Chemical mapping of a 177-nucleotide RNA with 2A3 and DMS. 2A3 adducts were read by reverse transcription with SuperScript II with manganese.
RNA sequence: GGGAACGACUCGAGUAGAGUCGAAAAGUCUGAGGCCUCAAAUGGACAUGCCACAUCUGAGGUGGCAAAUAAGAAUGCGUACCUUAGUGAUGGAGAGGAUGAUGAGGCAUUCCCACCUCUUGUGGUGCAACCAUCCUGGUUUCGACCAGGAUGGUUGAAAAGAAACAACAACAACAAC
Reactivity to 2A3 in 0.01 (KOAc 150mM, MgCl2 10mM, bicine 150mM(pH8.5), 24C), signal-to-noise 2, nucleotides 027 to 126: g040u000c030u130g090a040g000g140c000c020u020c040a020a070a160u240g070g000a010c020a070u200g000c010c000a000c010a030u080c050u040g020a000g000g010u010g020g000c000a020a060a070u270a050a040g120a050a040u050g000c030g110u100a000c000c000u010u020a030g020u030g160a250u090g060g040a100g010a020g080g030a030u100g040a040u050g020a070g050g000c030a020u020u020c010c000c000a020c020c000u070c000u060u080g040u020g040g010u030g000
Reactivity to DMS in 0.01 (KOAc 150mM, MgCl2 10mM, bicine 150mM(pH8.5), 24C), signal-to-noise 4, nucleotides 027 to 126: g030u010c030u030g000a170g010g020c010c000u000c030a050a140a140u000g010g000a060c100a150u010g010c000c020a060c050a050u010c060u000g010a020g010g040u000g020g000c200a020a050a080u010a150a180g000a100a110u000g010c030g020u010a060c010c000u000u010a030g030u010g000a160u010g000g000a080g000a100g000g010a080u000g000a170u000g000a060g030g010c030a160u000u000c010c010c000a120c060c010u010c110u010u010g000u010g000g020u000g010